[RMDB]
Structure probing data (DMS and 2A3) for a 177-nucleotide construct.
Conditions: 150 mM KOAc, 10 mM MgCl2 and 150 mM bicine (pH 8.5), 24 C.
Values cover nucleotides 27 to 126.
RNA sequence: GGGAACGACUCGAGUAGAGUCGAAAACAGCUCGAUUUUUUGAAGAGAGGUUUCAGGGUUGAAAGUGAUGGGAGGGUGCUUGCCCCUUUAGAUUUGCAAGCUAUCUAUUCUUCCCUGUAUUAUAUCAACAAGAUGAGACAUUCGUGUCUCAUCUUGUAAAAGAAACAACAACAACAAC
Reactivity to DMS in 0.01 (KOAc 150mM, MgCl2 10mM, bicine 150mM(pH8.5), 24C), signal-to-noise 2, nucleotides 027 to 126: c070a060g020c030u010c010g010a040u010u000u010u000u020u000g010a150a170g000a080g000a070g020g000u000u010u020c030a020g010g000g020u000u000g010a030a030a140g000u010g000a090u010g000g030g010a100g010g020g020u000g000c020u000u000g000c010c020c010c040u000u000u020a070g000a120u000u010u010g010c010a000a030g000c030u010a030u000c040u000a140u000u000c040u000u000c000c000c000u000g000u030a060u010u010a090u010a080u000c140a100
Reactivity to 2A3 in 0.01 (KOAc 150mM, MgCl2 10mM, bicine 150mM(pH8.5), 24C), signal-to-noise 1, nucleotides 027 to 126: c010a030g030c010u020c030g010a070u000u000u030u040u300u300g090a170a000g030a000g010a010g110g050u070u060u060c020a000g080g100g000u040u010g110a040a030a060g050u070g090a130u140g070g000g070a130g040g030g010u050g020c020u010u020g060c000c000c000c000u000u260u050a160g060a190u180u120u050g010c000a000a000g050c000u010a000u020c000u040a200u050u030c010u010u030c040c000c000u010g030u020a050u070u180a110u040a010u040c030a010